[RMDB]
RNA sequence: GGGAACGACUCGAGUAGAGUCGAAAAGCCUCAAUCAGGCACUACCGGAGGGCCUUGCCGCAGCCGGUGGCGGUAUGAGCGGGGUUAUCGUCGUUUCGGCUCCCGAUCCUCGUACAGGCCGUGACCGCAUAGUGCGGCCGUUCGCGGCCGCACUAUGAAAAGAAACAACAACAACAAC
Reactivity to 2A3 in 0.01 (KOAc 150mM, MgCl2 10mM, bicine 150mM(pH8.5), 24C), signal-to-noise 2, nucleotides 027 to 126: g020c000c000u000c030a030a080u090c020a020g100g050c030a010c040u040a020c040c050g000g020a090g020g060g020c040c080u030u250g030c050c060g080c100a050g060c010c030g020g000u030g040g040c060g020g000u130a050u090g020a020g000c050g000g010g000g070u070u060a120u200c070g070u030c000g020u040u060u060c020g010g000c020u070c020c040c020g080a140u150c010c020u020c000g020u100a070c070a100g060g000c050c000g000u020g070a090c040c000g000
Reactivity to DMS in 0.01 (KOAc 150mM, MgCl2 10mM, bicine 150mM(pH8.5), 24C), signal-to-noise 1, nucleotides 027 to 126: g010c000c000u010c090a080a140u000c050a090g000g050c080a160c050u010a020c080c000g010g000a180g000g010g000c080c140u030u060g000c060c130g040c060a120g000c000c000g010g030u020g000g000c000g000g020u010a030u000g050a150g040c300g000g000g000g000u000u000a050u000c100g000u020c050g000u000u010u010c020g000g010c050u000c000c140c080g000a120u020c060c000u030c030g050u000a120c040a110g000g000c000c000g000u000g000a120c010c000g000